This 207-nucleotide RNA was probed chemically with DMS and 2A3. The DMS profile rests on 1,590 reads. Values cover nucleotides 27 to 156. It was measured as part of the RMDB library RNAMAK.

RNA sequence: GGGAACGACUCGAGUAGAGUCGAAAAUGUCUGUUCGCAGACAAGCUACCGUAGGCAACCUACCCACCGCUGUAGGGCGAAGAACAACUCUUCGAAAGAGGAGUUGGGAGCCUGAGGGCGAGGGUUGCCUAAACGGACGAAGCGAGUUCGCUCGCAAAGCUUUAAUGCCUUUCGAGGCAUUAAAGCUAAAAGAAACAACAACAACAAC
Reactivity to DMS in 0.01 (KOAc 150mM, MgCl2 10mM, bicine 150mM(pH8.5), 24C), signal-to-noise 1, nucleotides 027 to 156: u000g010u000c000u000g060u000u000c250g040c010a080g030a010c000a050a090g020c040u040a150c000c050g020u000a050g030g030c010a000a000c000c010u000a060c000c040c030a300c120c010g000c000u030g000u010a300g040g010g010c000g000a120a220g010a070a110c000a070a010c000u000c000u000u000c000g020a170a180a200g020a010g030g000a000g010u010u020g040g000g000a260g010c000c000u030g000a190g010g000g000c010g010a130g010g030g000u000u000g000c000c000u000a000a040a030c000g000g000a090c070g000a030a150g020c040g020a190g040u000u000c090g080c010u020c020g000c000a150a050
Reactivity to 2A3 in 0.01 (KOAc 150mM, MgCl2 10mM, bicine 150mM(pH8.5), 24C), signal-to-noise 3, nucleotides 027 to 156: u100g000u000c020u010g030u050u130c300g020c100a000g000a000c020a040a000g080c030u240a160c030c000g010u020a010g000g000c000a000a000c000c000u210a300c090c010c010a030c010c020g010c100u260g020u030a010g000g040g020c000g110a240a040g000a020a010c000a000a000c000u010c010u010u020c010g040a040a050a030g000a010g040g000a000g000u000u000g010g000g010a020g000c010c000u030g020a170g030g080g000c000g000a000g000g000g000u000u000g000c010c000u000a010a000a010c020g030g040a010c070g000a040a000g000c020g000a010g010u090u160c140g070c120u000c010g000c000a000a140